Chemical mapping of a 207-nucleotide RNA with 2A3. It was measured as part of the RMDB library OK3TST. 2A3 adducts were read by reverse transcription with SuperScript II with manganese. The 2A3 profile rests on 563 reads.
[RMDB]
RNA sequence: GGGAACGACUCGAGUAGAGUCGAAAAUUGCGAAGGUUCCGUGCGAAUAAUAGAAUCGCUCACCUUCAACAAGCCCAUACACCUACAGGCUUUGAUUCUUUUAUCCGUAGGUAGUAGCAUGCUGGCAUUCAGGACCAAUCAGCCUUCGCGCUACGUGCUGGCUAGGUGUUUUCGAACACCUAGCCAGAAAAGAAACAACAACAACAAC
Reactivity to 2A3 in 0.01 (KOAc 150mM, MgCl2 10mM, bicine 150mM(pH8.5), 24C), signal-to-noise 1, nucleotides 027 to 156: u110u100g050c020g010a010a010g010g000u100u190c180c090g010u060g010c000g000a000a080u170a180a050u120a170g240a230a090u020c010g000c000u000c010a000c000c010u050u050c000a000a010c070a000a060g030c000c020c000a020u030a030c080a000c000c010u030a000c000a070g040g000c040u150u020u000g090a080u110u180c000u000u140u010u130a030u060c010c010g020u000a000g040g000u020a050g010u000a020g010c040a040u130g020c050u040g010g000c000a040u080u080c170a090g110g100a110c050c050a010a070u090c000a060g000c000c000u080u080c020g000c010g030c000u030a010c010g000u000g020